[RMDB]
RNA sequence: GGGAACGACUCGAGUAGAGUCGAAAAGUGGGCACCCUGCUCGGCCUCAACCGGGUGAUGCCCGAGACCACCAAGGCCACCGCGCGCAUGGUGGUGGAGAAAGUGGUGCGCGAGAUCGAGCAGCGCACCACCUAUUAGCCUUCGGGCUAAUAGGUGGAAAAGAAACAACAACAACAAC
Reactivity to DMS in 0.01 (KOAc 150mM, MgCl2 10mM, bicine 150mM(pH8.5), 24C), signal-to-noise 9, nucleotides 027 to 126: g020u010g010g010g010c060a090c070c080c080u000g010c010u000c010g010g000c050c040u000c110a110a300c100c010g000g000g020u000g010a110u010g010c000c000c000g000a170g010a080c020c000a020c010c020a050a190g010g000c010c010a050c050c050g010c050g020c130g010c180a110u010g010g020u000g000g010u000g000g000a060g000a040a300a160g010u000g000g010u000g010c080g010c140g000a070g000a070u000c040g000a050g010c030a110g010c080g010c080a120
Reactivity to 2A3 in 0.01 (KOAc 150mM, MgCl2 10mM, bicine 150mM(pH8.5), 24C), signal-to-noise 9, nucleotides 027 to 126: g110u110g020g050g020c030a050c020c020c010u010g000c000u000c010g010g000c010c020u050c030a050a060c040c010g000g000g030u110g210a130u300g110c000c000c000g000a030g020a010c000c000a000c010c010a030a040g200g000c010c000a020c020c020g030c010g010c010g030c150a100u210g080g000u010g010g000u010g010g010a080g030a010a090a010g030u020g020g000u050g060c060g020c050g000a020g000a030u040c020g000a010g010c020a000g000c010g000c030a030
An RNA of 177 nucleotides, treated with DMS and 2A3 and read out base by base. 2A3 adducts were read by reverse transcription with SuperScript II with manganese. Source: RMDB library OK2TST, as collected in RNAgym. Values cover nucleotides 27 to 126.